[RMDB]
RNA sequence: GGGAACGACUCGAGUAGAGUCGAAAAGCUGCCUCUGACGUCCUUAAGGGUGGUAAAGCGGGUCUCCCCCGGAAACGGGGCCGCGCCUGGCGCUCGCACGGGUAUGCGUGGCGGUCGACCCUGGCCGGGUAUCGCUAUAGUUCGCUAUAGCGAUACCAAAAGAAACAACAACAACAAC
Reactivity to 2A3 in 0.01 (KOAc 150mM, MgCl2 10mM, bicine 150mM(pH8.5), 24C), signal-to-noise 1, nucleotides 027 to 126: g020c020u030g000c000c010u030c080u100g060a060c030g030u060c000c000u080u060a090a090g000g030g000u040g010g110u100a140a040a000g040c000g000g090g030u000c100u090c050c010c000c030c000g040g050a030a050a020c010g000g000g000g000c000c000g040c010g000c010c040u020g100g030c020g000c050u020c040g040c000a060c080g060g030g010u170a100u210g000c030g020u020g010g080c020g000g030u080c020g060a110c020c030c000u020g060g030c010c020g080
Reactivity to DMS in 0.01 (KOAc 150mM, MgCl2 10mM, bicine 150mM(pH8.5), 24C), signal-to-noise 3, nucleotides 027 to 126: g010c040u000g000c020c010u020c050u000g000a120c080g000u000c010c010u000u010a160a190g010g000g020u000g000g010u000a030a090a160g010c040g000g010g010u010c050u000c160c020c000c010c000g000g000a060a070a160c020g010g000g000g010c050c030g010c080g010c040c030u000g000g020c030g000c030u000c030g000c100a080c190g000g010g010u000a080u000g020c020g010u000g010g020c010g010g000u010c020g000a120c000c010c000u010g000g010c030c080g000